[RMDB]
RNA sequence: GGGAACGACUCGAGUAGAGUCGAAAAGGAACAGGGAAACUCAAGUCAAUCUGGGGCCCGUGAAAAGGCGAGUACGGUGUUCGUACCGAGAUCCGACACAGGUGCUCUGGCAGAGGAAGCCAAGGCCUUAGGCGAUUUAGUUCGCUAAAUCGCCUAAAAAAGAAACAACAACAACAAC
Reactivity to DMS in 0.01 (KOAc 150mM, MgCl2 10mM, bicine 150mM(pH8.5), 24C), signal-to-noise 3, nucleotides 027 to 126: g020g020a040a050c030a110g000g000g000a100a100a160c020u010c040a040a040g020u010c100a070a180u020c050u020g020g000g000g030c040c020c030g030u000g000a080a030a100a080g000g000c020g010a180g000u000a060c020g000g000u030g030u040u030c050g000u020a040c020c030g000a150g010a110u000c050c040g000a070c070a060c030a060g000g010u010g000c010u010c040u010g000g030c070a160g000a050g030g010a100a130g010c020c020a030a110g010g000c030c030
Reactivity to 2A3 in 0.01 (KOAc 150mM, MgCl2 10mM, bicine 150mM(pH8.5), 24C), signal-to-noise 2, nucleotides 027 to 126: g040g010a030a070c070a100g060g000g020a100a010a000c000u010c070a030a050g060u100c060a040a130u100c020u030g020g010g040g000c000c000c000g000u020g010a070a050a030a000g020g020c030g010a040g060u020a030c000g000g070u080g100u220u300c030g000u040a030c020c000g010a030g000a140u030c000c020g020a010c010a010c010a030g000g110u110g040c000u000c000u040g040g000c010a000g020a000g100g090a060a000g010c000c010a020a040g010g030c000c020